RNA sequence: GGGAACGACUCGAGUAGAGUCGAAAACGAUGUAAAUGUUGCCUAAUCCAUUACCUUCGCGCGCAUAGCGUUGGCGAUACAUCAACAGCACAAUCACCGUGCGCCCGGCCACUGAUGCGGCGGUGAGACGAAACACCUAUUUCGAUAGGUGUUUCGUAAAAGAAACAACAACAACAAC
Reactivity to 2A3 in 0.01 (KOAc 150mM, MgCl2 10mM, bicine 150mM(pH8.5), 24C), signal-to-noise 4, nucleotides 027 to 126: c020g020a020u050g010u110a060a110a120u110g010u100u060g030c010c010u060a080a090u050c050c030a070u080u080a070c000c040u050u070c020g010c010g000c010g000c130a140u140a150g020c030g030u020u060g020g000c010g030a050u040a090c000a030u050c020a010a060c020a050g070c030a020c030a110a100u070c010a010c030c020g050u150g250c030g010c000c010c010g030g010c020c040a110c060u100g040a130u120g030c020g000g010c010g000g000u010g000a030g010
Reactivity to DMS in 0.01 (KOAc 150mM, MgCl2 10mM, bicine 150mM(pH8.5), 24C), signal-to-noise 4, nucleotides 027 to 126: c150g010a040u010g010u000a060a100a070u020g010u000u010g010c060c050u000a110a110u000c060c080a070u010u000a180c050c070u000u000c050g010c030g010c120g020c170a110u000a110g000c030g030u010u000g010g030c060g010a080u010a040c100a040u000c030a080a080c100a080g020c070a060c120a070a130u000c040a020c040c040g010u000g010c020g000c010c120c050g000g000c060c080a040c090u010g020a070u000g010c020g010g010c010g010g000u000g000a040g000